[RMDB]
RNA sequence: GGGAACGACUCGAGUAGAGUCGAAAAGGAUGCUCGUUCGCGAGCAUCCACUGAGAUAGCCACUAUAAAGAUUAAGUGUUCCUACUCGAGACAGGAUGUCUAUGCUCCUGGCCUUCGGGCCAGGAAAACCCGUAUUGAGUUUCGACUCAAUACGGGUAAAAGAAACAACAACAACAAC
Reactivity to DMS in 0.01 (KOAc 150mM, MgCl2 10mM, bicine 150mM(pH8.5), 24C), signal-to-noise 2, nucleotides 027 to 126: g000g010a010u000g010c010u000c000g000u000u000c220g010c010g010a010g030c000a000u000c000c010a040c190u000g020a280g010a040u000a110g020c300c020a020c020u000a050u000a080a050a170g010a210u010u000a070a030g010u000g000u000u000c110c020u010a010c020u000c020g000a020g010a120c070a070g010g000a140u010g010u010c040u030a110u010g010c130u010c020c000u010g000g040c000c000u000u010c260g020g000g020c010c000a000g000g000a000a020a090
Reactivity to 2A3 in 0.01 (KOAc 150mM, MgCl2 10mM, bicine 150mM(pH8.5), 24C), signal-to-noise 2, nucleotides 027 to 126: g010g010a010u000g000c000u020c010g040u070u090c270g000c010g080a000g000c000a000u010c000c000a000c010u040g030a000g010a000u030a040g070c060c000a030c010u080a040u150a300a200a100g220a190u110u300a130a030g020u020g030u040u090c000c000u000a010c000u000c000g010a010g000a010c050a030g180g040a090u110g080u040c040u090a080u220g090c030u020c000c000u000g010g050c000c000u030u020c210g070g040g000c000c040a000g010g000a000a000a000
An RNA of 177 nucleotides, treated with DMS and 2A3 and read out base by base. Reactivities are given for positions 27 through 126. The DMS profile rests on 1,095 reads. 2A3 adducts were read by reverse transcription with SuperScript II with manganese. The data come from the RNA Mapping Database (RMDB), library M2PK50.